Background: An RNA of 207 nucleotides, treated with 2A3 and read out base by base.
RNA sequence: GGGAACGACUCGAGUAGAGUCGAAAAGCUAGUCGGUGACGACUAGCAGCCACGACUAAGGUCGUGGGAAGAUGCUCACAAAGACCACAGUGGCAUCAAUAACUACAUCAUGUGGUCAAACCGGAUUAACGGAUAACAUUAAAAUUUAAGAUGUAGGCCCCUCCAUACGAUUCGUCGUAUGGAGGGGAAAAGAAACAACAACAACAAC
Reactivity to 2A3 in 0.01 (KOAc 150mM, MgCl2 10mM, bicine 150mM(pH8.5), 24C), signal-to-noise 1, nucleotides 027 to 156: g000c000u000a000g000u000c000g000g030u030g030a060c000g000a000c000u030a010g000c000a000g000c000c000a000c020g000a010c010u100a280a000g210g010u030c000g000u020g000g000g000a050a040g000a000u020g000c090u070c210a000c000a000a060a020g030a020c000c000a000c000a000g020u000g010g000c000a030u030c010a000a020u180a090a000c000u000a000c000a010u020c010a020u020g030u000g000g000u020c010a000a000a010c020c010g110g010a220u210u260a190a100c020g010g010a080u140a200a000c040a080u080u280a010a250a030a050u110u110u090a040a010g000a000u000g000u000a000g070g000
For 2A3 the reverse transcriptase was SuperScript II with manganese. The reactions ran in a buffer of 150 mM KOAc, 10 mM MgCl2 and 150 mM bicine (pH 8.5), at 24 C. The data come from the RNA Mapping Database (RMDB), library OK3TST.